Description:
Chemical mapping of a 207-nucleotide RNA with 2A3. Values cover nucleotides 27 to 156. The data come from the RNA Mapping Database (RMDB), library OK3TST.

[RMDB]
RNA sequence: GGGAACGACUCGAGUAGAGUCGAAAACUGCAGGUCAACGGACGUUCUUCAGAUCAGCUAUUGCAGAAGAAAGGUCAGCCAAGCGCUCUGGGCCACGUCGACUGUAUAUAGGAGCUUCUGAUUUCAACCAGAAGCUAACUCUCUCCGAAACAAUGAGCUGAUACUCCUCAUUCGUGAGGAGUAUCAGAAAAGAAACAACAACAACAAC
Reactivity to 2A3 in 0.01 (KOAc 150mM, MgCl2 10mM, bicine 150mM(pH8.5), 24C), signal-to-noise 1, nucleotides 027 to 156: c020u050g050c020a030g080g090u180c080a060a050c060g030g060a000c060g000u000u090c010u130u080c010a010g000a080u010c060a070g010c000u050a110u300u080g010c060a070g080a080a010g110a050a250a030g130g020u110c060a010g080c040c020a090a000g020c020g000c040u010c000u040g010g010g000c070c070a030c060g030u010c010g000a020c000u000g060u050a060u010a010u020a160g110g000a020g000c000u000u000c010u000g080a160u170u270u300c050a040a020c040c000a000g000a000a000g010c000u000a040a030c000u000c000u010c000u000c020c020g090a090a080a040c070a020a220u220g030a030g070